Description: An RNA of 177 nucleotides, treated with DMS and 2A3 and read out base by base. For 2A3 the reverse transcriptase was SuperScript II with manganese. Values are in units of 0.01, from 0 to 300, in steps of 10. DMS adducts were read by reverse transcription with MarathonRT. The DMS profile rests on 3,639 reads. For 2A3, 2,267 sequencing reads were counted.
RNA sequence: GGGAACGACUCGAGUAGAGUCGAAAAGGUCUCUCGUCCAGACUGGCCGGCUGAGGCCGUGGUGGUGGGUCCGUUGCACUUUGAGCCGACUGAUCGGGUGUUGCAGAUCCCUUCCGGCUCCGGGCCGCAUUAGCCGCGGUUUCGACCGCGGCUAAUGAAAAGAAACAACAACAACAAC
Reactivity to DMS in 0.01 (KOAc 150mM, MgCl2 10mM, bicine 150mM(pH8.5), 24C), signal-to-noise 2, nucleotides 027 to 126: g020g000u030c000u000c030u000c030g010u010c020c110a080g020a130c090u020g000g000c080c000g000g020c160u010g000a060g020g000c050c020g050u040g020g000u000g000g000u010g020g000g000u000c010c010g000u000u020g010c060a030c080u020u000u030g000a030g010c010c080g000a160c120u020g000a070u000c090g010g000g000u000g010u000u050g000c170a150g010a070u010c000c010c010u010u000c040c000g010g020c010u000c040c060g000g000g000c030c020g010
Reactivity to 2A3 in 0.01 (KOAc 150mM, MgCl2 10mM, bicine 150mM(pH8.5), 24C), signal-to-noise 4, nucleotides 027 to 126: g030g000u010c020u000c050u050c050g030u000c050c020a040g030a240c060u110g020g020c020c000g050g000c130u080g050a040g010g020c010c020g040u020g020g070u060g020g020u080g050g000g030u000c040c030g040u040u160g060c070a080c070u120u070u300g030a020g020c040c010g090a160c110u160g030a100u080c080g020g060g020u100g040u160u110g040c040a030g020a150u050c010c030c010u030u040c010c000g000g000c000u000c010c020g050g010g010c010c020g000